[RMDB]
RNA sequence: GGGAACGACUCGAGUAGAGUCGAAAAAAUGUGUAGCACCCAAAAUGCGUACAGUCACGGAAAUAAUACACGGUAAAGAAAAACUGAGUCGCGAUUACGAUUUGACGGAAUUUGACGCAAAAAACAUAAAUAGCAAAGAGGAUUUUAAUAAUUUGCAAACAAACUGUCAUUUCGAUGACAGUUUGUUAAAAGAAACAACAACAACAAC
Reactivity to 2A3 in 0.01 (KOAc 150mM, MgCl2 10mM, bicine 150mM(pH8.5), 24C), signal-to-noise 1, nucleotides 027 to 156: a000a000u040g010u010g000u050a070g010c010a050c020c030c030a060a000a000a000u060g010c020g040u050a060c050a030g010u020c100a010c090g010g050a160a080a000u140a070a040u060a090c020a010c010g020g010u040a090a090a080g030a010a020a040a090a070c020u040g000a000g000u000c010g010c020g050a030u000u120a030c100g010a000u020u040u160g090a070c010g030g030a040a040u200u140u100g000a040c000g000c020a000a000a080a000a000a000c040a000u180a110a120a020u160a070g020c020a020a030a000g060a120g010g180a030u140u000u100u100a090a000u070a040a060u050u010u060g050c080a130
Reactivity to DMS in 0.01 (KOAc 150mM, MgCl2 10mM, bicine 150mM(pH8.5), 24C), signal-to-noise 1, nucleotides 027 to 156: a050a060u020g010u010g050u000a150g050c000a110c050c000c090a090a080a190a150u000g090c050g010u010a080c020a120g010u000c030a060c030g010g000a120a050a020u000a120a090u000a140c060a000c000g050g050u000a020a110a130g000a120a080a050a070a170c000u000g020a170g030u010c000g030c010g040a160u000u010a040c000g020a200u000u000u000g000a100c010g000g030a050a080u010u020u000g000a080c000g000c000a010a020a030a060a060a060c080a110u000a030a000a060u000a100g020c050a020a010a050g060a180g000g000a130u000u000u000u010a040a060u000a040a120u010u000u030g010c010a080